The data come from the RNA Mapping Database (RMDB), library TTRINS. This 177-nucleotide RNA was probed chemically with DMS. For DMS, 926 sequencing reads were counted. Conditions: 150 mM KOAc, 10 mM MgCl2 and 150 mM bicine (pH 8.5), 24 C.
RNA sequence: GGGAACGACUCGAGUAGAGUCGAAAAGAUAUGGAUUCUGUCGUUAUCCACGAAGCCGAUAAGCUCGGGUCGGAAACGACCCUGGAGCUUUUGACGGCUGAGUGGAUAACGACAGAAUCCUAAGUCACUACGACUUAAUGUUCGCAUUAAGUCGUAGAAAAGAAACAACAACAACAAC
Reactivity to DMS in 0.01 (KOAc 150mM, MgCl2 10mM, bicine 150mM(pH8.5), 24C), signal-to-noise 1, nucleotides 027 to 126: g010a040u030a300u000g020g000a050u000u000c010u000g000u000c010g000u000u000a020u000c000c000a010c050g010a300a070g030c000c010g030a160u010a020a030g030c000u000c000g000g000g010u000c000g000g010a110a070a150c010g020a000c010c000c030u000g040g050a010g050c000u000u000u000u000g000a250c240g020g000c010u000g010a300g000u000g000g010a000u010a000a010c000g000a000c000a010g010a000a020u000c000c000u010a000a060g020u010c030a210